Structure probing data (DMS and 2A3) for a 177-nucleotide construct.
The DMS profile rests on 882 reads.
For 2A3, 766 sequencing reads were counted.
The reactions ran in a buffer of 150 mM KOAc, 10 mM MgCl2 and 150 mM bicine (pH 8.5), at 24 C.
RNA sequence: GGGAACGACUCGAGUAGAGUCGAAAAAAGACAGCAUAAAGCACUUGACCUUAUUUACUAGGUUCCACCAUGGGAAUCCAUGCACUCUAAAGAUUUCCCCCUAUUUCUACAUCACUUUGCUCAAGGGGAUACGGUUGACUUUCGAGUCAACCGUAUCAAAAGAAACAACAACAACAAC
Reactivity to DMS in 0.01 (KOAc 150mM, MgCl2 10mM, bicine 150mM(pH8.5), 24C), signal-to-noise 1, nucleotides 027 to 126: a060a040g020a070c050a040g010c030a100u010a020a110a120g030c040a110c090u010u000g020a060c020c040u000u010a060u030u000u000a130c100u000a070g040g010u000u010c080c060a070c120c090a090u010g010g020g010a050a060u010c020c030a060u000g000c090a060c040u010c040u030a030a110a080g000a110u000u010u000c020c010c000c050c090u000a100u000u000u000c040u000a000c060a030u000c110a030c070u000u010u000g000c060u000c000a090a050g020g000g020
Reactivity to 2A3 in 0.01 (KOAc 150mM, MgCl2 10mM, bicine 150mM(pH8.5), 24C), signal-to-noise 1, nucleotides 027 to 126: a000a000g090a010c120a020g090c010a040u220a300a180a020g020c000a000c030u030u070g020a070c010c000u030u080a120u100u250u100a160c120u030a030g010g030u050u000c020c040a050c000c050a070u100g060g000g030a100a120u120c000c020a010u000g010c020a030c040u040c020u050a130a180a040g020a160u070u040u160c000c010c000c000c020u030a120u060u160u050c040u070a030c010a000u040c000a030c130u160u060u100g000c010u020c130a010a010g090g020g000